[RMDB]
RNA sequence: GGGAACGACUCGAGUAGAGUCGAAAAGAAUGUUUGAAUUUGGCGCCGCGUUGAUUUGGAGUCGUACUAUGGUUUUUGGUACUCACAUAGUACGUUCCGAAUCGACUAGUUAACAAAUUUUAAAUAAUGUUAUGCAUGAUUUCGAUCAUGCAUAACAAAAAGAAACAACAACAACAAC
Reactivity to DMS in 0.01 (KOAc 150mM, MgCl2 10mM, bicine 150mM(pH8.5), 24C), signal-to-noise 2, nucleotides 027 to 126: g010a100a080u010g000u000u000u000g030a020a020u000u010u000g000g010c210g030c120c030g000c250g010u000u000g010a010u000u000u000g000g000a000g000u000c000g020u010a010c000u000a020u000g000g010u000u000u000u010u000g020g030u050a060c070u000c040a120c000a010u000a000g010u010a000c010g010u010u000c000c000g040a000a010u010c000g000a000c010u020a130g000u000u000a070a220c020a010a000a030u000u000u000u010a010a050a050u010a070a130
Reactivity to 2A3 in 0.01 (KOAc 150mM, MgCl2 10mM, bicine 150mM(pH8.5), 24C), signal-to-noise 5, nucleotides 027 to 126: g090a030a130u160g030u060u070u040g010a010a010u000u010u010g080g000c150g010c050c010g090c100g010u000u000g000a000u000u000u000g000g030a020g030u250c000g010u000a000c000u000a010u010g010g120u050u080u030u120u250g150g010u090a060c050u040c030a070c010a020u000a000g000u000a010c000g000u000u000c000c010g000a000a000u000c000g000a000c000u000a010g000u020u140a100a030c000a000a000a000u010u050u110u220a110a130a020u170a110a090